Chemical mapping of a 177-nucleotide RNA with 2A3 and DMS.
[RMDB]
RNA sequence: GGGAACGACUCGAGUAGAGUCGAAAAUUUCAAAUGGCACUAUGAGCUGCCAAUGAUGUAUCACCACCAUAUCUCAUUAUUCUCCAGUAAAUGUGAUAAUAAUGUCAUCUGUUAACAUAAAAAAAGUAGCAUAAAUUAUGUUCGCAUAAUUUAUGCUAAAAGAAACAACAACAACAAC
Reactivity to 2A3 in 0.01 (KOAc 150mM, MgCl2 10mM, bicine 150mM(pH8.5), 24C), signal-to-noise 3, nucleotides 027 to 126: u030u030u010c010a030a080a110u110g010g000c000a010c050u080a160u300g120a030g110c090u010g030c000c020a020a000u050g010a010u020g050u080a080u070c040a020c110c000a010c000c000a030u020a070u090c040u030c010a010u010u050a030u050u010c040u010c030c050a010g050u140a050a180a170u050g030u070g040a020u010a030a030u050a030a010u030g030u030c020a050u010c080u000g070u080u070a100a050c030a060u250a060a140a040a020a030a000a030g050u030
Reactivity to DMS in 0.01 (KOAc 150mM, MgCl2 10mM, bicine 150mM(pH8.5), 24C), signal-to-noise 2, nucleotides 027 to 126: u000u000u000c020a010a060a190u010g000g000c020a010c020u020a180u000g000a140g020c220u000g030c010c000a030a300u000g040a050u000g000u010a040u020c110a160c030c040a070c140c040a000u000a010u000c020u010c020a020u000u000a040u000u000c140u000c020c010a090g020u000a060a110a070u000g020u010g000a010u020a040a020u000a040a060u010g010u000c040a030u020c100u000g020u000u000a050a100c110a080u040a000a010a030a070a040a120a170g000u000

The 2A3 profile rests on 2,091 reads.
DMS adducts were read by reverse transcription with MarathonRT.